The record gives the reactivity of an RNA of 177 nucleotides to DMS and 2A3. The reactions ran in a buffer of 150 mM KOAc, 10 mM MgCl2 and 150 mM bicine (pH 8.5), at 24 C. For DMS, 5,529 sequencing reads were counted. High DMS reactivity at an A or C suggests that its Watson-Crick edge is free.

RNA sequence: GGGAACGACUCGAGUAGAGUCGAAAAGAAAAGCGGUAUUGGAUCGUACCGCGAACGAUCCGGUAAAGAAAUUUAAAGGAGCCAAGGUGUCGGCUCCGACACCUUAAGAAAAGGGUAAUCCCGAAAACCCUUAUGAAUUCUUCGGAAUUCAUAAGGGAAAAGAAACAACAACAACAAC
Reactivity to DMS in 0.01 (KOAc 150mM, MgCl2 10mM, bicine 150mM(pH8.5), 24C), signal-to-noise 3, nucleotides 027 to 126: g010a060a070a130a120g000c020g020g000u020a010u020u030g000g010a090u010c020g000u000a010c000c010g000c010g000a060a090c110g000a080u010c010c000g000g010u010a070a050a080g000a050a080a120u000u000u040a070a060a080g020g000a010g010c050c040a040a020g000g030u000g000u000c030g010g020c150u040c140c030g000a040c020a030c000c000u010u000a120a110g010a030a050a100a080g000g000g020u010a130a120u000c010c000c010g010a040a050a090a090
Reactivity to 2A3 in 0.01 (KOAc 150mM, MgCl2 10mM, bicine 150mM(pH8.5), 24C), signal-to-noise 5, nucleotides 027 to 126: g050a020a090a010a010g000c010g000g000u010a010u030u070g100g100a020u030c010g000u010a020c000c010g000c000g010a010a010c000g010a000u000c000c020g000g020u100a080a090a030g130a020a100a040u210u250u160a170a160a070g110g000a020g090c020c050a000a010g020g000u010g020u020c020g030g090c100u040c120c010g000a000c000a000c000c000u020u000a060a040g060a050a130a000a020g010g010g010u100a090a120u150c000c000c000g050a070a030a030a070